[RMDB]
RNA sequence: GGGAACGACUCGAGUAGAGUCGAAAACCAGCCACGUUUCAGAUGCUCAGUAAUCACACGGGGCAGCUCGUGGCUGCCACAUUGUGCAGCACAGAUUACAGAACAUGCCCAUGGUACUGGCAAGUUCGUGGCACAUGUCCUUCGGGACAUGUGCCACAAAAGAAACAACAACAACAAC
Reactivity to 2A3 in 0.01 (KOAc 150mM, MgCl2 10mM, bicine 150mM(pH8.5), 24C), signal-to-noise 1, nucleotides 027 to 126: c000c010a010g000c030c020a050c030g020u020u080u140c070a040g040a170u050g000c020u020c200a010g000u040a200a030u060c040a010c010a030c220g070g000g000g000c030a000g010c010u020c070g060u050g120g010c000u000g010c010c000a090c030a300u220u300g050u090g010c060a000g000c000a010c010a080g070a080u040u300a050c020a070g040a080a020c020a150u060g010c000c000c000a030u060g030g000u010a030c000u020g010g000c010a000a060g010u030u050c080
Reactivity to DMS in 0.01 (KOAc 150mM, MgCl2 10mM, bicine 150mM(pH8.5), 24C), signal-to-noise 1, nucleotides 027 to 126: c020c030a250g060c020c010a050c160g050u020u000u000c070a160g000a260u000g040c000u020c000a040g000u000a020a050u050c010a110c230a030c120g060g000g010g020c060a040g000c010u000c030g020u000g000g000c000u000g050c020c020a090c230a100u000u000g050u000g020c050a000g100c000a090c070a050g000a120u000u000a050c090a220g000a000a030c060a020u000g020c110c020c020a110u000g000g000u000a070c160u010g000g020c090a010a090g020u020u030c120
Conditions: 150 mM KOAc, 10 mM MgCl2 and 150 mM bicine (pH 8.5), 24 C. An RNA of 177 nucleotides, treated with 2A3 and DMS and read out base by base. For DMS, 567 sequencing reads were counted. The 2A3 profile rests on 1,232 reads. The data come from the RNA Mapping Database (RMDB), library OK2TRN.